[RMDB]
RNA sequence: GGGAACGACUCGAGUAGAGUCGAAAAGACAAAUGCAGCAUUUUAGGCUAAGCAGGAAAGGGACGGUAGCUCCUGGUGUCAGUUCAUACGGUGUGAUGCAUCUGCGUCGUGCACACAUGCACCCAAAGUACAGAAAAAUGUUCGCAUUUUUCUGUACAAAAGAAACAACAACAACAAC
Reactivity to DMS in 0.01 (KOAc 150mM, MgCl2 10mM, bicine 150mM(pH8.5), 24C), signal-to-noise 8, nucleotides 027 to 126: g000a070c080a050a060a090u000g000c030a040g020c030a070u000u000u000u000a110g010g010c030u000a070a090g030c030a050g010g010a060a060a080g010g010g010a050c060g020g020u000a070g000c070u000c020c020u010g000g010u000g010u010c050a060g000u000u000c080a070u010a090c120g010g020u000g010u010g000a110u000g000c010a040u010c060u010g010c100g020u000c120g010u000g010c020a030c050a040c050a040u000g010c080a090c010c010c050a050a070a130
Reactivity to 2A3 in 0.01 (KOAc 150mM, MgCl2 10mM, bicine 150mM(pH8.5), 24C), signal-to-noise 6, nucleotides 027 to 126: g040a010c030a010a100a030u120g000c010a020g010c020a070u040u030u100u270a110g050g030c020u050a070a030g010c010a010g010g070a080a050a050g050g010g000a010c030g060g000u050a020g030c040u020c020c020u030g000g040u030g020u030c040a040g020u050u100c030a030u080a150c090g030g000u020g020u020g050a160u030g000c010a020u010c040u120g050c030g060u130c030g010u050g010c010a000c000a000c000a020u060g030c010a070c010c000c000a040a080a010